Structure probing data (2A3) for a 177-nucleotide construct. For 2A3 the reverse transcriptase was SuperScript II with manganese.
RNA sequence: GGGAACGACUCGAGUAGAGUCGAAAACGUAACACAGUGAGUGGACGGAAUAAAUCCCCUUCCCACCUCCCCACUGUCCACUCACUGUCUUCCUAAGAGGAAAUAUAAAUCGGGGGUGGGAAGGGGACGACGGGUGACCAUUCGUGGUCACCCGUCGAAAAGAAACAACAACAACAAC
Reactivity to 2A3 in 0.01 (KOAc 150mM, MgCl2 10mM, bicine 150mM(pH8.5), 24C), signal-to-noise 1, nucleotides 027 to 126: c000g120u050a120a000c000a000c000a100g000u000g000a000g000u000g000g000a010c000g160g060a200a000u190a150a110a000u030c000c000c000c000u000u000c000c000c000a000c000c000u000c200c190c110c000a090c020u040g000u000c020c000a000c000u000c000a000c010u000g000u000c000u000u080c000c000u040a110a000g020a190g190g170a040a010a010u300a030u090a010a150a050u050c030g010g000g000g000g000u000g000g000g000a000a000g000g030g000g000a000